[RMDB]
RNA sequence: GGGAACGACUCGAGUAGAGUCGAAAAGAUAUGGAUAACGAAAUCAUCCAUGAAGGCGAUAAGGUGCGGUCGGAAACGACCGGCACCUUUUGACGCCUGAACAUGGAUGAUUUCGUUAUCCUAAGUCCUACAAUAGGAUCUUCGGAUCCUAUUGUAGAAAAGAAACAACAACAACAAC
Reactivity to DMS in 0.01 (KOAc 150mM, MgCl2 10mM, bicine 150mM(pH8.5), 24C), signal-to-noise 3, nucleotides 027 to 126: g000a120u020a300u000g010g010a020u010a000a000c000g020a010a010a010u000c000a000u000c010c000a000u000g030a140a040g000g030c000g010a150u000a000a020g010g050u000g020c000g000g010u000c000g010g010a110a120a240c020g010a040c000c000g050g060c010a010c000c000u020u000u000u000g020a230c080g010c000c000u000g000a090a070c010a040u000g010g010a010u000g010a000u000u000u000c000g000u000u010a000u000c000c000u000a010a090g000u010c050